[RMDB]
RNA sequence: GGGAACGACUCGAGUAGAGUCGAAAACAGUCUGCGGUUCGCCGCAGACUGCUCGCUUCCAUAGCUCAGCAGGUAGAGCACUUCCAUGGUAAGGAAGAGGUCAGCGGUUCGAGCCCGCUUGGAAGCUUAAGGCGUAGCGUGGGUUCGCCCACGCUACCAACAGUAGCUCUUUCGAGAGCUACUGUUGAAAAGAAACAACAACAACAAC
Reactivity to 2A3 in 0.01 (KOAc 150mM, MgCl2 10mM, bicine 150mM(pH8.5), 24C), signal-to-noise 3, nucleotides 027 to 156: c010a000g000u000c010u000g010c000g040g050u060u110c270g030c090c000g000c000a000g000a000c000u000g000c000u010c040g000c000u000u010c000c000a000u010a010g010c000u000c020a080g000c070a090g300g140u200a000g010a000g000c000a010c010u010u000c010c010a100u180g190g110u300a180a120g060g000a010a000g000a010g000g000u050c000a000g000c000g000g000u000u000c000g000a000g000c000c000c000g010c000u000u000g010g020a000a000g020c000u000u070a040a000g040g020c030g010u000a000g000c010g000u000g000g020g020u040u040c120g110c010c000c000a000c010g000c000u000a000c000
Reactivity to DMS in 0.01 (KOAc 150mM, MgCl2 10mM, bicine 150mM(pH8.5), 24C), signal-to-noise 2, nucleotides 027 to 156: c020a030g000u010c000u000g010c010g030g010u000u000c290g040c000c000g050c010a010g000a000c000u000g000c010u000c030g010c010u020u000c010c000a030u000a300g010c000u000c010a070g040c090a180g020g020u000a040g010a010g140c000a200c010u000u010c000c010a140u000g020g020u010a200a180g020g010a030a020g000a050g020g010u000c030a010g000c010g020g010u000u010c030g000a300g000c040c010c000g000c030u000u000g010g010a040a030g010c030u000u000a050a100g030g030c020g020u000a000g000c010g030u020g000g030g010u000u000c230g000c010c000c010a010c010g020c000u000a000c010